RNA sequence: GGGAACGACUCGAGUAGAGUCGAAAACCUCUGGAUCGGGAUAACCUCGGGAAACUGAGGCUAAUCCUGAAUAGCGUUCUCACCCUGGAGUGGGGAGAACGUGAAAUGCUCCGGCGCCAGAGGAUGUUAUUGCCUUAUCCUUCGGGAUAAGGCAAUAAAAAGAAACAACAACAACAAC
Reactivity to 2A3 in 0.01 (KOAc 150mM, MgCl2 10mM, bicine 150mM(pH8.5), 24C), signal-to-noise 5, nucleotides 027 to 126: c000c000u000c000u000g000g000a000u000c010g000g000g000a000u000a020a020c000c000u000c010g020g000g030a040a050a040c010u010g000a000g000g000c000u010a030a040u040c000c010u000g000a010a010u000a010g010c000g000u000u000c060u050c050a300c020c000c040u130g220g170a170g190u160g030g010g000g010a000g000a000a000c000g000u000g000a000a000a000u050g010c020u030c090c210g090g000c000g000c000c000a000g000a010g000g010a000u020g010u000
Reactivity to DMS in 0.01 (KOAc 150mM, MgCl2 10mM, bicine 150mM(pH8.5), 24C), signal-to-noise 1, nucleotides 027 to 126: c020c000u020c000u000g000g000a000u000c000g030g000g010a010u020a070a210c000c020u000c000g000g000g010a100a110a180c020u000g000a020g010g000c050u000a130a040u000c000c000u000g010a000a000u000a210g000c000g020u000u000c000u000c010a140c000c000c020u040g000g010a140g010u040g040g000g000g000a000g000a020a000c010g010u000g000a010a030a030u010g000c000u010c300c140g020g000c000g010c000c000a000g030a010g010g000a190u000g010u000